[RMDB]
RNA sequence: GGGAACGACUCGAGUAGAGUCGAAAAGACUGGCAGAUCUAACGGCCGCGCGGUUGCCCACGAGUGACCCGUAGCCAAUCGCGGCUCCCCUUACUGGAGCUUUACUGAAAGCAGGUCAGCGACAGCAGAGAGCCUGUUCGUUCGCGAACAGGCUCUCAAAAGAAACAACAACAACAAC
Reactivity to 2A3 in 0.01 (KOAc 150mM, MgCl2 10mM, bicine 150mM(pH8.5), 24C), signal-to-noise 1, nucleotides 027 to 126: g050a020c000u030g130g010c060a060g000a060u080c000u160a290a120c060g030g000c000c000g060c000g070c190g000g030u000u000g040c020c020c000a040c160g090a250g060u000g000a000c000c000c000g000u040a000g040c000c000a000a000u010c000g010c000g090g000c000u040c000c000c000c000u050u160a010c070u050g000g000a000g040c000u030u030u030a190c150u100g020a080a080a040g120c040a000g000g020u010c020a000g010c000g040a040c000a000g060c030a000